[RMDB]
RNA sequence: GGGAACGACUCGAGUAGAGUCGAAAAAAAUCUCACUCAAUACAGCGGAUGGUUGAAAUGCCAUAUACGCCAAUGAAUACCGCAACAAUGGUGAUGGGGCAAAGUGUCCCCAUUCGUUGAGUGCGGAUUCCAAUACUAAGUUCGCUUAGUAUUGGAAAAAAGAAACAACAACAACAAC
Reactivity to DMS in 0.01 (KOAc 150mM, MgCl2 10mM, bicine 150mM(pH8.5), 24C), signal-to-noise 8, nucleotides 027 to 126: a040a060a070u000c020u010c020a120c160u020c090a090a060u020a080c290a160g000c010g000g000a030u000g000g010u000u000g000a120a090a090u000g000c000c020a010u010a070u020a120c010g020c010c080a100a090u010g010a110a080u020a120c000c000g000c010a010a030c020a010a020u000g020g030u010g010a020u000g000g000g000g020c010a070a070a120g020u060g000u030c010c000c000c000a000u000u000c000g010u000u000g000a120g010u000g000c000g000g010a200
Reactivity to 2A3 in 0.01 (KOAc 150mM, MgCl2 10mM, bicine 150mM(pH8.5), 24C), signal-to-noise 9, nucleotides 027 to 126: a000a000a010u040c020u010c010a050c020u120c040a060a110u110a150c030a030g000c000g020g010a010u010g020g040u040u090g080a070a070a060u160g000c000c000a010u050a030u060a090c000g000c000c010a040a040u110g030a040a020u090a180c000c000g000c010a010a000c000a020a010u040g110g010u140g070a010u000g000g000g020g000c030a100a260a190g150u130g120u290c000c000c000c000a000u020u020c000g000u000u010g040a080g100u010g000c000g000g000a000
An RNA of 177 nucleotides, treated with DMS and 2A3 and read out base by base.
Conditions: 150 mM KOAc, 10 mM MgCl2 and 150 mM bicine (pH 8.5), 24 C.
It was measured as part of the RMDB libraries RFM100 and RFMREP.